[RMDB]
RNA sequence: GGGAACGACUCGAGUAGAGUCGAAAACUUCUAGCGGUGAGGUGGAUGUCGUCUUUGGGUGUGGGUACCACACGCCUGAAUAACGGGAGGAGCGCUGGCGGCGUGUGCCGGUCGCUGCUCUGGAGGGGGUGGUCCGGUGUUUCGGCGCCGGACUACCAAAAGAAACAACAACAACAAC
Reactivity to 2A3 in 0.01 (KOAc 150mM, MgCl2 10mM, bicine 150mM(pH8.5), 24C), signal-to-noise 2, nucleotides 027 to 126: c000u040u010c010u000a030g020c010g000g000u030g000a050g000g010u010g010g060a040u060g010u050c000g000u000c040u060u030u030g010g000g000u000g000u000g000g000g070u110a150c000c040a040c000a000c010g000c000c000u000g020a040a030u140a150a030c010g010g020g000a030g010g000a020g030c010g000c020u020g030g010c010g040g000c040g000u110g040u070g010c000c010g000g000u060c040g000c000u020g010c000u000c000u010g010g010a030g000g000g000
Reactivity to DMS in 0.01 (KOAc 150mM, MgCl2 10mM, bicine 150mM(pH8.5), 24C), signal-to-noise 1, nucleotides 027 to 126: c170u000u010c020u000a040g010c050g010g020u000g000a070g000g010u000g010g020a100u020g010u010c060g000u000c090u000u000u000g000g000g010u000g000u000g000g000g000u030a300c300c280a300c010a060c000g000c020c000u000g000a140a210u090a300a060c080g000g000g000a060g000g000a000g000c030g010c010u000g000g010c000g020g010c070g000u020g000u000g010c030c000g000g000u020c080g010c010u000g000c000u010c020u000g010g000a100g000g000g000